[RMDB]
RNA sequence: GGGAACGACUCGAGUAGAGUCGAAAACGUGGUACUUACGGACCGUCCAGAGGAGGAGGCAGUGGGCCCAGAUAUAACUUCAGGCCCCGAGUGCAACCACCUGAUCGAUACGGCUUUGGAAGGGGACCCCGACAGGGAUAUUCGUAUCCCUGUCGGGAAAAGAAACAACAACAACAAC
Reactivity to 2A3 in 0.01 (KOAc 150mM, MgCl2 10mM, bicine 150mM(pH8.5), 24C), signal-to-noise 4, nucleotides 027 to 126: c040g030u080g020g040u090a060c020u040u060a060c110g030g020a060c000c000g040u110c050c020a020g040a020g140g020a050g020g030a050g080g000c030a020g040u300g100g000g010c020c020c000a000g020a010u160a010u080a100a090c100u060u050c070a020g000g000c000c020c000c030g060a040g100u110g050c010a030a040c010c000a020c000c010u060g020a100u090c090g030a020u030a100c050g010g040c010u050u040u080g020g030a060a010g040g000g000g050a040c000
Reactivity to DMS in 0.01 (KOAc 150mM, MgCl2 10mM, bicine 150mM(pH8.5), 24C), signal-to-noise 2, nucleotides 027 to 126: c030g000u030g000g020u010a090c060u020u000a190c100g020g020a060c020c010g010u010c110c020a230g010a040g000g030a090g000g000a080g000g020c010a100g000u020g000g000g000c030c000c050a060g000a070u000a020u030a140a080c230u010u020c050a300g030g000c020c000c000c000g000a080g000u000g020c020a050a070c020c000a140c010c030u000g000a180u000c060g020a270u020a050c060g000g000c020u000u000u000g000g040a010a030g020g000g050g000a070c150